[RMDB]
RNA sequence: GGGAACGACUCGAGUAGAGUCGAAAAAAGCACAGACUUCGUUCCACGUCAUUGAUCUGUUGCCAGCGAACAUCGCGAAGCUGGUCCAACGUGAAUAGCGAUCCUUCCGGCACAGGGUGGAAAGGUCCGUUGAUGGCCUUUGCCACCUUCUCGACAAAAUCCCUUGGGAUUUCGAUCCCAAGGGAUUAAAAGAAACAACAACAACAAC
Reactivity to DMS in 0.01 (KOAc 150mM, MgCl2 10mM, bicine 150mM(pH8.5), 24C), signal-to-noise 2, nucleotides 027 to 156: a070a030g060c030a060c100a090g020a080c010u000u000c010g020u010u000c030c000a180c100g000u030c080a150u000u000g000a050u000c000u000g000u010u000g030c030c000a140g000c070g000a060a050c110a210u000c080g040c100g000a150a140g000c000u000g020g000u000c090c030a030a110c060g000u000g030a060a100u010a070g000c040g020a050u010c000c030u000u000c000c050g020g060c050a140c120a050g070g000g020u000g000g010a030a020a020g000g050u000c020c030g090u000u000g010a230u020g030g000c030c070u010u000u000g030c020c010a040c020c000u000u010c000u010c050g010a110c040a060a100
Reactivity to 2A3 in 0.01 (KOAc 150mM, MgCl2 10mM, bicine 150mM(pH8.5), 24C), signal-to-noise 2, nucleotides 027 to 156: a000a000g100c050a080c050a110g080a090c020u100u100c050g000u050u010c010c000a060c040g050u020c070a100u000u210g060a100u040c030u040g070u040u050g060c030c040a000g030c030g050a040a040c000a100u110c020g000c040g030a000a020g060c100u080g000g050u030c080c040a030a030c050g060u080g060a040a070u090a090g060c000g010a010u030c010c000u000u060c040c020g030g020c050a010c080a040g000g030g000u000g000g000a000a000a000g000g000u040c050c080g110u110u180g100a220u100g000g010c000c000u010u020u030g080c000c010a020c000c000u020u020c000u010c000g020a010c040a000a110